An RNA of 177 nucleotides, treated with 2A3 and DMS and read out base by base. Conditions: 150 mM KOAc, 10 mM MgCl2 and 150 mM bicine (pH 8.5), 24 C. 2A3 is a SHAPE reagent: it acylates the 2'-hydroxyl of flexible nucleotides of all four kinds.
[RMDB]
RNA sequence: GGGAACGACUCGAGUAGAGUCGAAAAUUGCUGGGCUGUGCAACAAGGUGACUAUUUGGGGAACUGCCCUACGUUGUCUGGAGUAGCUGCACCAUCUUACAUCCCCAGUGGCCAUGUAUGAAAGCCCGGCUUCUCUAAAUUUCGAUUUAGAGAAGCCAAAAGAAACAACAACAACAAC
Reactivity to 2A3 in 0.01 (KOAc 150mM, MgCl2 10mM, bicine 150mM(pH8.5), 24C), signal-to-noise 2, nucleotides 027 to 126: u120u120g040c010u040g020g010g030c020u040g000u080g080c020a060a020c000a060a100g030g020u060g080a050c020u040a060u200u170u140g010g000g000g000a020a060c040u100g020c010c000c000u000a030c030g050u070u110g120u100c070u070g030g010a060g010u030a020g030c050u070g000c050a040c040c000a030u020c030u060u050a040c040a150u070c000c000c040c000a000g010u030g040g000c020c030a030u050g010u050a150u090g130a080a080a030g010c000c000c040
Reactivity to DMS in 0.01 (KOAc 150mM, MgCl2 10mM, bicine 150mM(pH8.5), 24C), signal-to-noise 3, nucleotides 027 to 126: u010u010g030c040u000g010g000g020c050u000g010u010g020c090a040a060c090a050a090g000g000u000g010a060c010u010a090u000u000u000g010g000g010g000a080a160c190u010g000c040c130c020u000a040c110g000u000u000g000u000c070u010g000g000a110g000u010a040g000c090u020g020c060a050c070c040a080u000c120u020u000a100c150a120u000c170c000c010c040a080g010u000g000g010c040c040a050u000g010u010a050u010g010a160a180a090g000c010c010c040